[RMDB]
RNA sequence: GGGAACGACUCGAGUAGAGUCGAAAAGAAAGAAAGAAGUCGGGAGAAUGGAUGUUGGAGGAGGAGGAGUCUGCUGGGCCGCCGAGGAACCUCGCGCAGACAUCUCAACCUUGGUCUCUUGACUCAAAUUUAAAAUGAUAUUCGUAUCAUUUUAAAUAAAAGAAACAACAACAACAAC
Reactivity to 2A3 in 0.01 (KOAc 150mM, MgCl2 10mM, bicine 150mM(pH8.5), 24C), signal-to-noise 7, nucleotides 027 to 126: g060a020a020a010g090a020a090a010g110a060a020g000u010c010g010g050g010a020g010a040a070u150g120g110a090u090g050u090u070g030g020a020g010g010a020g000g030a010g000g010a020g000u010c010u000g000c010u030g000g020g010c030c010g020c070c090g060a110g020g040a110a130c020c020u070c060g060c030g000c040a000g010a010c010a110u010c010u000c000a040a100c010c000u010u020g090g010u010c000u010c000u000u030g000a010c000u000c020a060a090
Reactivity to DMS in 0.01 (KOAc 150mM, MgCl2 10mM, bicine 150mM(pH8.5), 24C), signal-to-noise 7, nucleotides 027 to 126: g010a130a100a120g000a110a100a120g000a100a020g010u000c000g010g010g000a020g000a050a070u030g010g010a110u010g010u000u010g010g010a020g000g010a070g010g010a020g000g000a050g010u000c000u000g000c010u010g000g000g000c030c020g000c200c120g010a130g000g010a110a110c080c010u010c110g010c200g010c010a000g010a010c010a020u000c000u000c010a030a020c010c010u000u010g000g010u000c000u000c000u000u000g000a010c010u000c050a060a070